RNA sequence: GGGAACGACUCGAGUAGAGUCGAAAAGGCGGUGUUGUGGCGGGGGCGAAACAGGAUCGACAAGGGUGUAAAGAUCGCUCUUUUACUCGGCAUGAUACCACCGUUAUCGGGUCAACAGAGUAGUUGCUAGGGGAACGGGUGUUCGCACCCGUUCCAAGAUGCUAUACGUCUUCGGACGUAUAGCAUCAAAAGAAACAACAACAACAAC
Reactivity to 2A3 in 0.01 (KOAc 150mM, MgCl2 10mM, bicine 150mM(pH8.5), 24C), signal-to-noise 2, nucleotides 027 to 156: g010g000c040g000g030u060g020u040u000g010u010g040g130c000g000g000g010g030g030c050g010a040a040a030c050a070g070g050a070u040c020g050a050c030a070a030g060g100g000u050g050u130a090a130a010g070a090u100c010g020c060u020c010u010u090u020u060a090c010u020c050g000g080c010a010u010g010a010u010a000c010c000a000c010c000g010u030u030a110u080c030g000g010g040u010c000a020a010c000a090g010a000g000u010a000g010u030u040g100c030u080a070g170g060g040g000a010a010c000g010g000g010u010g000u050u110c100g020c080a000c000c000c000g000u010u000c000c040a000a000
The record gives the reactivity of an RNA of 207 nucleotides to 2A3. For 2A3, 1,461 sequencing reads were counted. The RNA was probed in 150 mM KOAc, 10 mM MgCl2 and 150 mM bicine (pH 8.5) at 24 C.